[RMDB]
RNA sequence: GGGAACGACUCGAGUAGAGUCGAAAAGUCUAGCGAACGGAUCCCACCCGGGAGACACGCAAGUCGCGAAUUAAGCCGACCGGCCAAGGUCAAUCGCAGAACUCAACUGCAUGAGUAAGCUAGACGAAGCUAUCGUAUAUUUCGAUAUACGAUAGCUAAAAGAAACAACAACAACAAC
Reactivity to 2A3 in 0.01 (KOAc 150mM, MgCl2 10mM, bicine 150mM(pH8.5), 24C), signal-to-noise 9, nucleotides 027 to 126: g000u000c000u000a000g000c010g020a060a040c020g050g030a020u020c010c000c000a020c010c010c000g020g000g030a050g000a020c040a020c030g010c030a100a090g230u190c060g020c020g050a100a180u270u100a220a020g030c040c010g010a010c010c000g020g000c010c020a040a010g020g000u010c020a010a050u080c080g000c020a020g020a180a110c070u090c220a060a130c030u030g000c020a060u090g010a020g070u020a010a010g000c000u000a000g000a010c000g000a010
Reactivity to DMS in 0.01 (KOAc 150mM, MgCl2 10mM, bicine 150mM(pH8.5), 24C), signal-to-noise 9, nucleotides 027 to 126: g010u000c000u010a010g000c010g010a240a060c050g000g020a050u000c000c010c010a180c300c030c030g000g010g000a150g000a040c020a160c040g010c020a080a130g010u010c180g010c020g000a160a080u010u010a070a150g020c020c020g010a120c020c080g010g000c020c030a200a150g000g000u010c010a070a090u000c070g010c020a030g010a070a080c140u020c170a090a120c030u000g000c040a100u000g010a100g020u000a060a250g000c000u000a010g000a020c010g010a110